This 177-nucleotide RNA was probed chemically with 2A3. The reactions ran in a buffer of 150 mM KOAc, 10 mM MgCl2 and 150 mM bicine (pH 8.5), at 24 C. 2A3 is a SHAPE reagent: it acylates the 2'-hydroxyl of flexible nucleotides of all four kinds. Reactivities are rounded to 0.1 and cut off at 0 and 3.

RNA sequence: GGGAACGACUCGAGUAGAGUCGAAAAUCGCACUGUGCAAGCCAGCAGUCGCCUUCCCGUCGUCGACCCGCGCCGUUCCAGCUUCCACUCUUUCGCUCACACGCACGGCGCCUCCCCCACAGUUCUCAGGUGUACUGUGCUUCGGCACAGUACACCUAAAAGAAACAACAACAACAAC
Reactivity to 2A3 in 0.01 (KOAc 150mM, MgCl2 10mM, bicine 150mM(pH8.5), 24C), signal-to-noise 1, nucleotides 027 to 126: u140c020g020c020a020c000u020g040u070g040c010a000a080g030c000c020a000g010c000a040g060u130c020g020c030c050u020u040c020c040c000g010u020c020g010u050c000g020a130c010c000c010g000c000g020c010c000g050u050u040c000c030a000g000c050u060u030c030c010a050c000u030c020u010u060u040c040g000c010u010c000a090c000a030c020g040c000a030c010g020g010c010g000c010c000u030c000c000c010c010c000a020c040a090g020u080u000c010u000c000